[RMDB]
RNA sequence: GGGAACGACUCGAGUAGAGUCGAAAAAACUAAAAGCGGUCCAGAAAAAUUGUAUUUAAUUAUGGCUCGUUACUGCUUAAGAUGCGUGUACGAUGACAAGAUGGACUCACUAUGGAAUUCACGCUCAAUUAAUCGGGUAGUUCGCUACCCGAUUAAUAAAAGAAACAACAACAACAAC
Reactivity to DMS in 0.01 (KOAc 150mM, MgCl2 10mM, bicine 150mM(pH8.5), 24C), signal-to-noise 1, nucleotides 027 to 126: a130a050c030u010a050a000a080a110g000c300g000g020u000c010c020a060g000a080a140a080a060a050u010u010g000u020a280u030u000u020a060a040u000u000a100u010g000g000c010u000c000g010u000u000a010c020u000g000c000u000u020a070a120g000a090u010g020c010g000u000g010u000a040c020g000a020u010g040a020c040a040a130g030a140u000g000g000a030c000u000c010a040c030u000a000u000g000g000a050a140u000u030c070a100c090g000c070u000c080a050
The record gives the reactivity of an RNA of 177 nucleotides to DMS.